This 177-nucleotide RNA was probed chemically with 2A3 and DMS. For DMS the reverse transcriptase was MarathonRT. For 2A3, 16,888 sequencing reads were counted. The reactions ran in a buffer of 150 mM KOAc, 10 mM MgCl2 and 150 mM bicine (pH 8.5), at 24 C. The data come from the RNA Mapping Database (RMDB), library OK1LIB. Values are in units of 0.01, from 0 to 300, in steps of 10. Values cover nucleotides 27 to 126.

[RMDB]
RNA sequence: GGGAACGACUCGAGUAGAGUCGAAAAGGUGGCUCGUUGUGGCGACACAACUCUCGUGAGUACGAGUCACCGAUUUAGCAUGUUCGUCCUACUAGGUCCCUGGACGAGGUGUAGGACGUUCAUGCGAGGGAUCCAUAACCUUCGGGUUGUGGAUCCCAAAAGAAACAACAACAACAAC
Reactivity to 2A3 in 0.01 (KOAc 150mM, MgCl2 10mM, bicine 150mM(pH8.5), 24C), signal-to-noise 5, nucleotides 027 to 126: g010g010u000g000g000c010u000c000g010u010u080g050u040g110g000c010g030a000c010a010c010a120a210c020u010c000u010c020g080u090g030a030g060u000a000c000g000a000g000u000c010a000c000c000g000a000u000u000u050a010g000c000a000u000g000u000u000c000g000u010c000c000u000a010c000u000a010g120g050u040c010c010c070u130g120g040a020c020g030a080g030g020u080g000u000a000g000g000a000c000g000u000u000c000a000u000g000c000g000a070
Reactivity to DMS in 0.01 (KOAc 150mM, MgCl2 10mM, bicine 150mM(pH8.5), 24C), signal-to-noise 4, nucleotides 027 to 126: g000g020u000g000g000c000u000c000g030u010u060g030u000g000g030c250g000a230c060a020c000a280a060c080u000c010u030c200g000u060g000a020g020u000a040c030g000a010g000u000c000a010c000c010g000a030u020u020u000a130g000c000a000u000g000u000u000c000g020u000c000c000u000a000c000u000a250g010g000u000c020c050c160u030g020g010a040c030g000a080g000g020u020g010u000a000g000g000a000c000g010u000u000c010a010u000g000c000g000a100